This 177-nucleotide RNA was probed chemically with 2A3 and DMS. For 2A3, 1,006 sequencing reads were counted. For 2A3 the reverse transcriptase was SuperScript II with manganese.
RNA sequence: GGGAACGACUCGAGUAGAGUCGAAAAGGGUUUGGAUUACAUCAAUAGUAACAAGAGCAGAAGUAAACAGAACAAGAAGUACUGCGGUUAUUCAAGUUCAAAGUUCACACUAUCGCAAUAAAGGGAAAGCGAUUCAAAUAUUCGUAUUUGAAUCGCUAAAAGAAACAACAACAACAAC
Reactivity to 2A3 in 0.01 (KOAc 150mM, MgCl2 10mM, bicine 150mM(pH8.5), 24C), signal-to-noise 2, nucleotides 027 to 126: g030g030g010u020u120u050g050g040a090u060u070a030c020a050u110c030a010a150u120a040g020u010a050a070c040a020a130g030a030g060c090a030g030a160a000g050u110a040a010a050c070a030g040a010a010c020a050a050g050a040a020g040u030a010c010u020g040c030g060g000u050u020a020u040u020c000a010a100g000u000u000c020a110a060a030g030u040u050c030a040c020a000c050u060a050u170c100g000c030a090a030u130a170a120a020g030g000g060a130a000
Reactivity to DMS in 0.01 (KOAc 150mM, MgCl2 10mM, bicine 150mM(pH8.5), 24C), signal-to-noise 2, nucleotides 027 to 126: g010g000g010u010u030u000g010g000a170u000u000a070c080a110u000c120a070a090u000a070g010u000a020a080c130a080a100g000a100g020c040a060g000a070a100g000u000a050a050a060c080a130g000a040a010c030a050a300g000a030a050g020u000a020c040u010g030c110g050g000u000u000a080u000u010c030a050a300g000u000u000c020a030a100a070g020u010u000c100a040c050a100c050u000a040u000c060g030c050a080a030u000a020a040a060g010g000g000a040a080